Structure probing data (DMS and 2A3) for a 177-nucleotide construct.

[RMDB]
RNA sequence: GGGAACGACUCGAGUAGAGUCGAAAAAGAUGGCUGCGAUGGUGAGAUAGUGAAAGCCCCCGCACAGUUCGCAGUGAAACUCUGUGAGGACCCGCGGCUUUCCUGUGCAGCAUUGAGGGCACCAGGAGGGUGGCCUAAUGUUCGCAUUAGGCCACCCAAAAGAAACAACAACAACAAC
Reactivity to DMS in 0.01 (KOAc 150mM, MgCl2 10mM, bicine 150mM(pH8.5), 24C), signal-to-noise 1, nucleotides 027 to 126: a070g010a090u040g000g000c020u000g000c020g010a000u000g000g020u060g000a010g000a050u000a080g010u060g020a010a110a050g120c040c000c110c010c120g000c010a030c050a020g000u000u000c080g000c080a110g000u000g020a080a090a060c030u060c080u020g030u020g000a010g000g010a100c060c090c150g000c140g050g010c040u000u000u000c050c010u000g020u000g000c000a030g030c020a090u040u040g010a160g000g000g010c080a090c000c000a140g030g000a300
Reactivity to 2A3 in 0.01 (KOAc 150mM, MgCl2 10mM, bicine 150mM(pH8.5), 24C), signal-to-noise 2, nucleotides 027 to 126: a000g150a050u140g020g090c030u030g060c030g150a150u090g000g140u010g050a220g060a040u040a090g130u140g090a080a000a010g000c050c080c010c030c000g040c000a030c020a030g080u110u120c050g000c100a050g000u060g140a060a030a030c060u070c000u020g040u000g000a110g000g050a040c090c120c030g030c030g020g030c030u000u030u000c000c000u020g070u040g070c010a050g000c040a050u150u170g110a120g000g000g000c030a020c020c000a050g020g140a080
Record summary:
DMS adducts were read by reverse transcription with MarathonRT. The RNA was probed in 150 mM KOAc, 10 mM MgCl2 and 150 mM bicine (pH 8.5) at 24 C. 2A3 adducts were read by reverse transcription with SuperScript II with manganese. Values cover nucleotides 27 to 126.